RNA sequence: GGGAACGACUCGAGUAGAGUCGAAAAGGCCGUUUGCUGCAUUUUGGUCAUUUGAAUGGCAUCGGGGUACACAAUUGGGUGCAGUGAUGUCCGGUUGAAGACUUGGUGGUGCGUGGUAUAGAGAUAACCUACAUAAUCUAUUCGUAGAUUAUGUAGGAAAAGAAACAACAACAACAAC
Reactivity to DMS in 0.01 (KOAc 150mM, MgCl2 10mM, bicine 150mM(pH8.5), 24C), signal-to-noise 9, nucleotides 027 to 126: g010g010c010c020g010u000u010u010g020c020u010g000c040a070u010u010u020u010g000g020u020c030a070u010u030u010g010a080a070u020g010g000c020a030u010c040g020g010g000g020u010a060c090a080c090a120a100u030u030g010g010g010u000g000c040a050g010u010g000a060u000g000u020c030c020g010g000u010u010g010a090a080g000a080c050u000u010g000g020u010g000g010u000g000c050g000u000g000g010u010a080u020a080g010a080g010a100u020a080a180
Reactivity to 2A3 in 0.01 (KOAc 150mM, MgCl2 10mM, bicine 150mM(pH8.5), 24C), signal-to-noise 9, nucleotides 027 to 126: g050g000c010c010g010u020u070u080g020c020u020g020c030a080u040u050u120u190g070g010u030c050a090u050u060u220g190a170a070u090g020g000c010a020u030c000g020g000g040g040u110a050c080a010c020a090a250u170u150g080g010g000u030g010c030a050g090u020g090a060u040g040u040c020c040g030g030u030u060g070a080a030g020a040c020u040u070g010g000u030g010g040u040g030c050g010u030g000g030u050a090u070a110g070a010g010a030u070a090a030
Chemical mapping of a 177-nucleotide RNA with DMS and 2A3. DMS adducts were read by reverse transcription with MarathonRT. The RNA was probed in 150 mM KOAc, 10 mM MgCl2 and 150 mM bicine (pH 8.5) at 24 C. For 2A3 the reverse transcriptase was SuperScript II with manganese.